The record gives the reactivity of an RNA of 177 nucleotides to DMS. High DMS reactivity at an A or C suggests that its Watson-Crick edge is free. For DMS, 978 sequencing reads were counted. Conditions: 150 mM KOAc, 10 mM MgCl2 and 150 mM bicine (pH 8.5), 24 C.
RNA sequence: GGGAACGACUCGAGUAGAGUCGAAAAAAGCUGCCAGCCAACAAACCAAAUGUCAUAACUGUAAAGGAAGCAAAUUACAACAUGUUGUUUAGUUGCGUGGAUGUGGUGAUCACUCAUGGAGGCAGUGUAACGAAACACCUUUCGAGGUGUUUCGUUAAAAAGAAACAACAACAACAAC
Reactivity to DMS in 0.01 (KOAc 150mM, MgCl2 10mM, bicine 150mM(pH8.5), 24C), signal-to-noise 2, nucleotides 027 to 126: a070a080g020c010u010g000c030c000a220g010c050c040a030a060c020a110a090a080c040c030a040a070a100u000g010u020c080a070u000a110a090c100u000g000u000a050a030a130g000g000a140a110g010c090a070a030a080u000u020a030c100a000a040c140a060u000g000u000u000g010u010u010u000a060g000u000u010g000c100g020u000g010g000a030u000g030u000g020g000u000g010a090u000c080a050c040u000c020a060u010g000g020a180g000g010c000a020g020u010g020